[RMDB]
RNA sequence: GGGAACGACUCGAGUAGAGUCGAAAACUCUCAGCCCCUCCACCUUGGGGUGCCCUAUCCGAGCACUGCAGUUUCGGUAGAAAGGCUAAGAACCUCGCAAUGAGGUAAGGUGGGACUUUUCCUUCUGCCCAAUACUAUCGUUCGCGAUAGUAUUGGGAAAAGAAACAACAACAACAAC
Reactivity to 2A3 in 0.01 (KOAc 150mM, MgCl2 10mM, bicine 150mM(pH8.5), 24C), signal-to-noise 3, nucleotides 027 to 126: c000u020c000u000c020a040g030c000c010c010c000u020c000c000a000c000c010u010u000g000g020g010g020u050g030c010c000c000u010a020u010c000c010g000a010g030c020a060c200u300g030c100a110g010u130u250u070c000g000g000u010a000g030a020a060a020g020g000c000u020a070a050g030a090a050c010c000u000c000g020c140a180a280u300g000a010g000g020u000a000a000g000g000u010g000g030g000a050c030u180u130u070u110c040c000u050u070c030u110g080
Reactivity to DMS in 0.01 (KOAc 150mM, MgCl2 10mM, bicine 150mM(pH8.5), 24C), signal-to-noise 1, nucleotides 027 to 126: c140u010c030u010c030a300g000c010c000c000c000u000c030c000a030c020c000u000u010g010g010g000g020u000g010c010c020c020u000a100u000c010c010g000a030g020c030a120c150u000g030c180a130g000u010u000u000c000g050g000u000a000g010a130a090a170g000g000c010u030a080a100g030a150a080c000c000u000c000g030c210a120a140u000g000a010g000g000u000a000a010g010g000u000g000g010g000a080c150u000u000u020u000c060c040u000u000c080u000g010